[RMDB]
RNA sequence: GGGAACGACUCGAGUAGAGUCGAAAAUGAUGGGGAAAACCCAGUGGCGACAAAUGCUAACGAAUUAUGAGAAUUGCCGUGAGGAAAAUGGUGCAUUGCCGGCCACGGUAGAAGUUAUUUAUGGGCAAUUUAGUAGCUGAUUCGUCAGCUACUAAAUAAAAGAAACAACAACAACAAC
Reactivity to DMS in 0.01 (KOAc 150mM, MgCl2 10mM, bicine 150mM(pH8.5), 24C), signal-to-noise 7, nucleotides 027 to 126: u000g010a160u010g010g000g010g000a110a090a100a160c030c030c020a100g040u000g000g020c020g010a060c080a040a060a070u010g000c020u000a080a120c100g010a090a080u010u000a080u010g000a160g010a080a100u000u000g010c020c010g020u010g010a160g010g010a040a050a070a070u010g010g010u010g010c080a070u010u000g010c000c000g020g020c040c010a020c010g030g010u000a060g010a070a130g010u000u000a050u000u000u000a060u010g010g000g000c100a100
Reactivity to 2A3 in 0.01 (KOAc 150mM, MgCl2 10mM, bicine 150mM(pH8.5), 24C), signal-to-noise 4, nucleotides 027 to 126: u090g030a040u070g010g000g000g000a030a120a100a190c010c040c040a040g020u030g030g030c030g020a060c080a050a120a030u110g010c020u040a100a030c040g070a050a020u100u030a080u250g110a070g080a130a080u120u060g000c010c010g020u040g020a190g050g090a120a130a060a110u110g010g000u050g030c100a140u060u120g000c000c010g080g000c020c000a010c010g030g000u030a020g020a080a010g010u050u080a050u100u220u080a070u110g060g000g000c020a020
Chemical mapping of a 177-nucleotide RNA with DMS and 2A3.
The DMS profile rests on 8,675 reads.
The RNA was probed in 150 mM KOAc, 10 mM MgCl2 and 150 mM bicine (pH 8.5) at 24 C.
Values cover nucleotides 27 to 126.